[RMDB]
RNA sequence: GGGAACGACUCGAGUAGAGUCGAAAAAUAUUGCUGAUGGACGUAUGGAGACGCUGGUGGCGCAUUUGGCCUUAAUGGGGGCACCAUAUGCGCUAUUACUUGAAGUUAAUCAGUGUGAUACCACGGAGUACGUAAACUCGUUCGCGAGUUUACGUACAAAAGAAACAACAACAACAAC
Reactivity to 2A3 in 0.01 (KOAc 150mM, MgCl2 10mM, bicine 150mM(pH8.5), 24C), signal-to-noise 2, nucleotides 027 to 126: a000u130a040u000u110g030c000u030g010a050u030g080g060a010c020g060u100a080u160g070g030a080g010a010c040g010c140u030g000g000u020g020g000c000g000c000a010u000u000u050g020g010c020c000u130u110a240a210u300g140g000g040g000g040c060a060c010c010a010u010a000u020g000c000g000c010u020a010u010u030a010c020u030u150g090a100a010g000u030u010a080a020u020c020a000g010u010g020u050g110a020u050a090c000c060a030c060g040g020a080
Reactivity to DMS in 0.01 (KOAc 150mM, MgCl2 10mM, bicine 150mM(pH8.5), 24C), signal-to-noise 3, nucleotides 027 to 126: a070u000a080u000u000g020c030u000g010a050u000g000g030a040c050g040u020a120u010g000g020a150g010a130c130g040c170u000g010g020u000g000g020c010g000c010a010u000u000u000g000g000c100c030u000u010a070a140u020g000g010g000g000g020c250a300c020c000a010u000a010u000g020c000g010c010u000a020u000u000a040c060u010u000g010a130a190g000u000u000a090a020u010c010a010g030u000g000u000g010a090u020a180c030c010a120c120g000g000a220